[RMDB]
RNA sequence: GGGAACGACUCGAGUAGAGUCGAAAAGAUAUGGACGUCUGAACCUUGGAUUUAGAGGGACUAUGGUUGUCGGAAACGACAACCACGAAUCCCUCUUGUCAGGUUACAGACGUCCUAAGUCAAAAUCAACGAUUAGGGUUCGCCCUAAUCGUUGAAACCCCGGUAGUAGGUUCGCCUACUACCGGGGAAAAGAAACAACAACAACAAC
Reactivity to 2A3 in 0.01 (KOAc 150mM, MgCl2 10mM, bicine 150mM(pH8.5), 24C), signal-to-noise 1, nucleotides 027 to 156: g010a000u050a050u150g030g000a010c010g000u030c000u000g010a000a020c020c000u130u300g260g010a080u300u300u020a070g000a010g000g020g000a010c050u080a020u040g000g000u010u030g000u000c020g000g020a140a020a010c000g020a000c000a020a020c020c010a010c010g000a000a300u010c000c000c000u000c000u000u000g000u000c100a000g000g000u010u060a020c000a000g050a000c000g000u000c000c000u000a000a000g000u000c010a000a000a020a060u010c000a000a000c030g000a030u010u000a020g000g000g090u020u110c230g120c010c000c000u030a000a000u020c000g000u000u000g000a000a000a000
Chemical mapping of a 207-nucleotide RNA with 2A3. For 2A3, 1,024 sequencing reads were counted. The reactions ran in a buffer of 150 mM KOAc, 10 mM MgCl2 and 150 mM bicine (pH 8.5), at 24 C. The data come from the RNA Mapping Database (RMDB), library RNAMAK.